[RMDB]
RNA sequence: GGGAACGACUCGAGUAGAGUCGAAAAACGCUCUAGCUGCUUAAUGCGGCUAGCAGUCGCUAGGGGAUGCCUGUAAACCCGAAACGACUGUCAGAUAGAACAGGAUCGCCGCCAAGUUCGCUGUAGACGUAACGGCUAAAACUCAUACAGCUCGCUCCUUCGGAAUGAAGUUCGCUUCAUUCCGAAGAAAAGAAACAACAACAACAAC
Reactivity to 2A3 in 0.01 (KOAc 150mM, MgCl2 10mM, bicine 150mM(pH8.5), 24C), signal-to-noise 2, nucleotides 027 to 156: a000c040g030c030u020c000u000a000g000c000u030g000c000u080u300a160a050u300g010c000g000g000c020u000a000g020c000a010g000u000c000g000c090u010a020g000g020g000g020a030u090g010c000c000u000g000u020a000a200a140c000c000c010g000a030a030a000c020g000a000c000u000g060u030c010a020g050a240u200a060g050a040a020c000a000g020g030a010u000c010g000c010c000g000c000c000a050a020g010u010u030c110g000c010u000g000u000a000g000a000c000g050u090a000a000c010g000g000c000u000a000a000a030a030c030u040c080a030u000a000c000a020g040c050u070c050g040c020u060c000
Structure probing data (2A3) for a 207-nucleotide construct. The RNA was probed in 150 mM KOAc, 10 mM MgCl2 and 150 mM bicine (pH 8.5) at 24 C. The 2A3 profile rests on 1,157 reads. Source: RMDB library ARCHII, as collected in RNAgym.